Conditions: 150 mM KOAc, 10 mM MgCl2 and 150 mM bicine (pH 8.5), 24 C.
Chemical mapping of a 170-nucleotide RNA with 2A3 and DMS.
The 2A3 profile rests on 146,318 reads.
RNA sequence: GGGAACGACUCGAGUAGAGUCGAAAAGGGCACCCACAAUAGGAUGGCAGGAGGGGACUGCGGGUCCGUCGUUCCAUCCUUUUCUUACCUUGUGGCCGGCAUGGCCCCAGCCUCCUCGCUGGCGCCGAGACUUGUACGUUCGCGUACAAGAAAAGAAACAACAACAACAAC
Reactivity to 2A3 in 0.01 (KOAc 150mM, MgCl2 10mM, bicine 150mM(pH8.5), 24C), signal-to-noise 9, nucleotides 027 to 129: g050g030g020c060a070c020c030c000a030c020a030a120u200a080g060g020a100u070g060g090c020a010g010g040a020g010g040g010g010a020c010u020g020c130g040g020g020u030c020c020g020u010c010g040u120u070c010c010a070u100c060c000u060u050u060u040c050u060u110a120c020c020u050u110g020u050g050g000c020c010g010g010c050a110u180g020g000c010c010c000c000a010g010c000c000u010c000c010u010c030g110c020u010g020g030c020g010c000c010g010a020g020a040
Reactivity to DMS in 0.01 (KOAc 150mM, MgCl2 10mM, bicine 150mM(pH8.5), 24C), signal-to-noise 9, nucleotides 027 to 129: g020g010g020c080a120c040c000c020a080c130a070a060u070a100g000g020a070u020g020g030c050a020g000g000a040g030g000g030g030a040c020u000g030c080g000g000g010u030c020c240g030u000c000g020u020u030c020c000a060u030c070c050u040u020u030u020c070u030u030a130c100c070u000u040g020u000g010g000c300c000g040g010c040a080u060g010g000c000c030c000c000a050g010c020c020u020c010c030u000c050g000c020u000g020g030c060g020c000c000g010a090g010a130
For 2A3 the reverse transcriptase was SuperScript II with manganese. Reactivities are given for positions 27 through 129.